Chemical mapping of a 177-nucleotide RNA with DMS and 2A3. 2A3 adducts were read by reverse transcription with SuperScript II with manganese. The reactions ran in a buffer of 150 mM KOAc, 10 mM MgCl2 and 150 mM bicine (pH 8.5), at 24 C. It was measured as part of the RMDB library M2PK90. For DMS the reverse transcriptase was MarathonRT.
RNA sequence: GGGAACGACUCGAGUAGAGUCGAAAAGCAACGAGCGUAAUCGCGUCUUGACUAGGGAGAGUGUAGGUGACGUGAGUAUCUAUCCCAGUGUGCAUAGCGCACAAUACGCUGAUCUACAGUCAAUUAAGCUAUUACUAGGCUUCGGCCUAGUAAUAGCAAAAGAAACAACAACAACAAC
Reactivity to DMS in 0.01 (KOAc 150mM, MgCl2 10mM, bicine 150mM(pH8.5), 24C), signal-to-noise 4, nucleotides 027 to 126: g020c130a080a090c070g030a080g000c080g020u000a070a070u000c040g010c020g020u000c050u010u000g010a100c080u000a090g030g000g000a090g020a050g010u000g010u000a020g000g030u020g000a040c050g030u000g000a110g010u000a030u000c090u000a140u000c030c000c020a150g010u000g020u000g000c010a120u010a120g000c160g010c010a030c010a060a110u000a070c060g000c010u000g000a100u010c060u000a050c070a040g020u010c040a060a110u000u000a050a190
Reactivity to 2A3 in 0.01 (KOAc 150mM, MgCl2 10mM, bicine 150mM(pH8.5), 24C), signal-to-noise 4, nucleotides 027 to 126: g060c040a020a100c080g070a020g030c020g050u090a050a030u100c000g000c010g050u000c020u060u140g040a080c020u060a080g120g040g010a060g020a010g030u080g020u070a050g010g050u040g010a030c020g020u030g020a020g030u060a040u060c050u030a090u040c000c030c010a050g000u020g010u010g060c040a120u150a220g050c020g000c030a000c000a020a010u090a040c020g030c000u020g000a120u050c030u080a120c050a050g040u050c020a020a070u110u130a130a030

Reactivities are given for positions 27 through 126.